[RMDB]
RNA sequence: GGGAACGACUCGAGUAGAGUCGAAAAGAUAUGGAGAAGGCUUUUGACGCACGCAGCUCGGAAACGAGCUGAUGUGCGAUAAGCCUCUCCUAAGUCAAAGCCAAACAGCGUUCGCGCUGUUUGGCAAGAAUGCAGAAUGGUUCGCCAUUCUGCAUUCAAAAGAAACAACAACAACAAC
Reactivity to 2A3 in 0.01 (KOAc 150mM, MgCl2 10mM, bicine 150mM(pH8.5), 24C), signal-to-noise 3, nucleotides 027 to 126: g010a020u070a020u090g040g030a020g040a300a180g020g000c050u030u140u150u200g280a130c100g010c000a010c000g000c000a000g000c000u000c000g010g010a030a030a050c000g000a000g000c010u020g000a020u030g000u000g030c000g000a000u000a010a000g000c020c000u000c000u010c000c000u000a050a000g010u010c040a060a090a010g020c000c000a010a000a000c000a000g050c000g050u150u160c260g030c020g030c190u000g010u010u000u000g000g000c000a010a010
Reactivity to DMS in 0.01 (KOAc 150mM, MgCl2 10mM, bicine 150mM(pH8.5), 24C), signal-to-noise 3, nucleotides 027 to 126: g000a040u010a300u010g000g000a010g010a080a050g000g020c000u010u000u000u010g020a230c080g010c000a000c010g010c000a010g000c010u010c020g020g000a080a060a150c000g000a010g000c000u000g000a010u010g030u020g010c000g020a020u000a000a010g000c000c000u000c000u000c000c000u000a010a080g000u000c020a100a120a160g000c000c000a000a000a000c000a000g000c000g030u000u000c250g020c000g050c000u000g000u000u000u000g000g010c010a000a010